[RMDB]
Structure probing data (2A3 and DMS) for a 170-nucleotide construct. The DMS profile rests on 12,561 reads. DMS adducts were read by reverse transcription with MarathonRT. The reactions ran in a buffer of 150 mM KOAc, 10 mM MgCl2 and 150 mM bicine (pH 8.5), at 24 C. The 2A3 profile rests on 3,641 reads.
RNA sequence: GGGAACGACUCGAGUAGAGUCGAAAACCAACAUAUGUUAGUGUUGAUGACAAGUAUAAGACGAGUGAUGAGCUUUGCGUGAAUCUUAAUUUACCCGCAAAUGUCCCAUACUCUCGUGUUAUUUCCAAGGCUUGAACCUUCGGGUUCAAGAAAAGAAACAACAACAACAAC
Reactivity to 2A3 in 0.01 (KOAc 150mM, MgCl2 10mM, bicine 150mM(pH8.5), 24C), signal-to-noise 4, nucleotides 027 to 129: c000c000a000a030c050a070u300a040u300g030u020u010a140g020u030g030u030u000g010a010u060g070a010c070a220a120g030u050a010u000a040a000g010a040c020g000a010g010u040g000a020u000g020a000g000c070u020u000u030g000c010g000u100g070a050a040u060c040u090u060a080a100u130u170u180a080c000c010c000g040c000a000a050a030u100g100u190c000c030c000a020u100a210c000u020c020u020c040g010u030g090u060u010a030u030u080u000c080c050a080a090g110g000
Reactivity to DMS in 0.01 (KOAc 150mM, MgCl2 10mM, bicine 150mM(pH8.5), 24C), signal-to-noise 3, nucleotides 027 to 129: c070c000a190a110c300a160u070a000u060g030u010u030a080g030u010g000u000u050g020a110u010g030a080c120a140a100g050u020a000u010a000a000g040a040c020g000a030g020u060g020a060u030g020a080g010c010u010u020u050g020c050g040u020g030a070a090u030c270u000u000a110a070u050u020u020a120c090c150c000g060c000a000a000a060u020g020u000c000c030c020a000u020a120c020u020c040u030c010g010u020g030u020u020a040u010u040u040c040c070a100a110g020g030